[RMDB]
RNA sequence: GGGAACGACUCGAGUAGAGUCGAAAAGAAAGAAAGUACUGAAAGUAUUGUGGGAAAUAAUGUGUAAAUCAUUGACCCUUCCUGCGCUGGUAAGAAUAAAAUUUUAGUCCAGACACCACCAGUAUAACCAAUCUAGUGACCUUCGGGUCACUAGAAACUACAGUAACAUGUUCGCAUGUUACUGUAGAAAAGAAACAACAACAACAAC
Reactivity to 2A3 in 0.01 (KOAc 150mM, MgCl2 10mM, bicine 150mM(pH8.5), 24C), signal-to-noise 6, nucleotides 027 to 156: g040a010a080a000g070a060a100a020g020u040a020c020u020g050a140a100a030g080u120a120u260u180g010u050g000g010g040a020a030a070u090a010a030u060g020u010g030u080a010a020a100u060c020a010u020u020g030a040c020c000c000u060u070c050c050u080g040c070g010c030u000g000g010u060a060a030g030a080a050u160a110a170a070a080u070u110u030u060a020g010u000c010c000a010g000a040c020a020c030c000a010c020c000a010g000u030a030u040a110a030c050c030a050a050u020c010u000a000g000u000g000a000c010c000u010u040c260g070g000g000u000c000a000c000u000a000g000a000a000a000
Reactivity to DMS in 0.01 (KOAc 150mM, MgCl2 10mM, bicine 150mM(pH8.5), 24C), signal-to-noise 3, nucleotides 027 to 156: g010a140a080a110g000a090a070a150g010u010a060c030u000g010a120a080a130g020u000a030u000u000g020u020g000g010g020a120a060a050u000a050a020u010g020u000g020u000a110a100a260u000c010a000u000u000g010a200c010c020c010u000u010c040c000u000g010c090g040c030u000g010g020u010a090a140g020a060a120u000a060a060a020a300u010u000u000u020a140g020u010c020c010a080g010a130c070a080c020c020a010c060c010a040g030u000a080u010a060a120c060c070a040a150u000c010u000a000g010u000g000a020c010c000u010u000c300g010g030g030u000c000a000c010u000a000g000a000a020a090
Annotation
This 207-nucleotide RNA was probed chemically with 2A3 and DMS. Conditions: 150 mM KOAc, 10 mM MgCl2 and 150 mM bicine (pH 8.5), 24 C. For DMS the reverse transcriptase was MarathonRT. The data come from the RNA Mapping Database (RMDB), library M2RFPK. Values are in units of 0.01, from 0 to 300, in steps of 10. 2A3 adducts were read by reverse transcription with SuperScript II with manganese.